The record gives the reactivity of an RNA of 177 nucleotides to DMS and 2A3. For 2A3 the reverse transcriptase was SuperScript II with manganese. For DMS the reverse transcriptase was MarathonRT. The 2A3 profile rests on 767 reads.
RNA sequence: GGGAACGACUCGAGUAGAGUCGAAAAGAAAACCGGCUAGACCGUGAUAGUUAUCUGGUCAGAACGGGCGCUUGUCGCGUGCCGUGUCGGGGUUCAAUUCCCCGCCGCUAUCAAACAGCCGGAAAAACCCAUACCCGCAGUUCGCUGCGGGUAUGGGAAAAGAAACAACAACAACAAC
Reactivity to DMS in 0.01 (KOAc 150mM, MgCl2 10mM, bicine 150mM(pH8.5), 24C), signal-to-noise 1, nucleotides 027 to 126: g000a120a040a160a150c020c000g000g000c010u000a000g040a090c020c200g050u010g020a000u000a020g000u020u060a040u020c000u000g000g000u000c300a070g070a000a000c040g000g130g000c000g030c000u000u020g000u000c300g010c000g000u000g120c010c000g050u000g110u000c000g000g000g000g000u000u000c000a070a300u000u000c000c000c000c100g000c000c070g020c000u000a000u000c030a000a090a000c000a130g000c000c020g000g000a040a000a000a000a080
Reactivity to 2A3 in 0.01 (KOAc 150mM, MgCl2 10mM, bicine 150mM(pH8.5), 24C), signal-to-noise 1, nucleotides 027 to 126: g100a000a090a010a040c000c000g000g010c000u070a000g040a150c070c070g100u010g000a000u000a000g020u060u100a060u050c020u030g080g130u200c150a110g050a000a000c020g000g020g000c000g000c010u280u300g110u300c130g000c030g000u070g300c000c000g000u000g020u000c000g020g000g000g000u000u000c000a010a000u030u000c000c000c000c000g000c000c000g010c000u000a000u000c000a000a000a080c000a000g000c000c040g000g000a070a000a000a000a000
The reactions ran in a buffer of 150 mM KOAc, 10 mM MgCl2 and 150 mM bicine (pH 8.5), at 24 C.